[RMDB]
The record gives the reactivity of an RNA of 177 nucleotides to DMS.

RNA sequence: GGGAACGACUCGAGUAGAGUCGAAAAGCUAAUCUAGGAUAUUAUUGUUAGAGCGGUCCAGGAAACCCUUUAGUUUUGUAGUCAAAACCAAUGUCAUGAGAACAGCAGAUUUGACCAAUGAAAUUGAUAAUGUUUAGGACUUCGGUCCUAAACAUUAAAAAGAAACAACAACAACAAC
Reactivity to DMS in 0.01 (KOAc 150mM, MgCl2 10mM, bicine 150mM(pH8.5), 24C), signal-to-noise 2, nucleotides 027 to 126: g000c060u000a040a150u010c060u000a120g000g000a070u010a100u000u000a100u000u010g000u000u010a060g000a050g030c230g010g000u020c040c040a090g010g010a150a100a120c050c030c030u000u000u020a040g010u000u000u000u000g010u040a140g040u000c020a020a040a030a040c030c050a020a110u010g000u000c040a120u010g000a140g010a060a040c050a020g010c170a050g010a090u000u000u010g020a050c000c080a060a040u000g010a050a040a100u000u000g010a130

Conditions: 150 mM KOAc, 10 mM MgCl2 and 150 mM bicine (pH 8.5), 24 C. It was measured as part of the RMDB library OK2TST.